About this RNA: The record gives the reactivity of an RNA of 207 nucleotides to DMS and 2A3.

RNA sequence: GGGAACGACUCGAGUAGAGUCGAAAAACACCAAAACUGAAAACGGAAGGCAAUCCUUCCACGACGAUACUUACUUUCCUUUGAUCGUCGUUACUACUGGCAUAGCCACAAAGGAGAGCAAACAUGAGCGCGGACACUGACUUCGGUCAGUGUCCAACAUCAAGGCAUUCUUCGGAAUGCCUUGAUGAAAAGAAACAACAACAACAAC
Reactivity to DMS in 0.01 (KOAc 150mM, MgCl2 10mM, bicine 150mM(pH8.5), 24C), signal-to-noise 1, nucleotides 027 to 156: a170c070a300c040c030a020a000a100a260c140u000g050a050a080a100a040c060g010g010a010a010g050g050c090a210a090u010c000c000u010u000c000c030a060c040g000a040c010g030a020u000a070c080u010u000a000c090u000u000u000c090c000u000u000u000g000a070u000c000g030u010c000g020u010u000a080c110u000a110c030u010g010g020c060a150u000a150g000c030c030a070c030a020a060a050g010g000a050g000a010g010c140a100a000a150c090a150u000g010a140g030c060g060c060g000g050a010c010a020c000u000g020a020c000u010u030c300g000g020u000c000a010g020u000g000u000c000c020a010a020
Reactivity to 2A3 in 0.01 (KOAc 150mM, MgCl2 10mM, bicine 150mM(pH8.5), 24C), signal-to-noise 5, nucleotides 027 to 156: a010c070a110c030c040a100a070a060a050c190u240g080a130a090a030a030c040g010g010a010a010g040g000c160a090a160u250c010c000u000u010c000c000a000c020g010a000c000g010a010u070a130c050u080u020a030c000u010u080u030c000c000u020u010u030g040a000u010c010g000u000c000g000u030u060a040c040u040a020c040u010g000g000c070a300u100a190g020c040c000a020c010a000a000a000g030g010a020g010a000g010c070a030a130a050c090a140u260g090a070g110c170g010c090g030g000a000c000a000c000u000g000a000c010u040u070c200g020g000u000c000a000g000u000g000u010c000c000a010a000
2A3 adducts were read by reverse transcription with SuperScript II with manganese.